Source: RMDB library TTRDEL, as collected in RNAgym. This 177-nucleotide RNA was probed chemically with 2A3 and DMS. For DMS, 1,063 sequencing reads were counted. Values are in units of 0.01, from 0 to 300, in steps of 10. The 2A3 profile rests on 1,899 reads. Reactivities are given for positions 27 through 126. The reactions ran in a buffer of 150 mM KOAc, 10 mM MgCl2 and 150 mM bicine (pH 8.5), at 24 C.
[RMDB]
RNA sequence: GGGAACGACUCGAGUAGAGUCGAAAAGAUAUGGAUCCUGUAGGGAGCCUGUCGGAAACGAUAAAGGCGAAGAACUACUGGAUCCUAAGUCAAAAGAGUAUCGAAUACUUCGGUAUUCGAUACUCAACAAUCGCUACCAGUUCGCUGGUAGCGAUUGAAAAGAAACAACAACAACAAC
Reactivity to 2A3 in 0.01 (KOAc 150mM, MgCl2 10mM, bicine 150mM(pH8.5), 24C), signal-to-noise 1, nucleotides 027 to 126: g020a000u060a010u180g010g000a000u000c020c020u020g020u000a030g000g000g070a020g000c000c000u000g060u030c000g010g050a080a060a000c000g020a020u130a220a300a000g020g010c010g140a270a060g030a040a020c000u000a000c000u000g010g000a000u010c000c000u010a030a010g010u000c060a030a000a020a140g020a010g020u010a000u000c000g000a010a000u010a010c020u030u050c300g130g000u010a000u020u000c010g000a010u000a000c000u000c010a000a010
Reactivity to DMS in 0.01 (KOAc 150mM, MgCl2 10mM, bicine 150mM(pH8.5), 24C), signal-to-noise 1, nucleotides 027 to 126: g020a040u000a300u000g010g000a000u000c000c000u000g000u000a000g000g000g000a080g010c000c010u000g000u000c000g030g000a070a020a180c000g020a030u000a120a100a050g020g000c000g000a080a130g000a170a140c000u000a020c000u010g010g010a010u000c000c000u000a020a090g000u020c020a090a020a200a150g010a020g000u000a000u000c000g000a000a000u000a000c000u000u020c170g030g020u000a010u000u000c000g000a000u000a000c000u000c000a020a070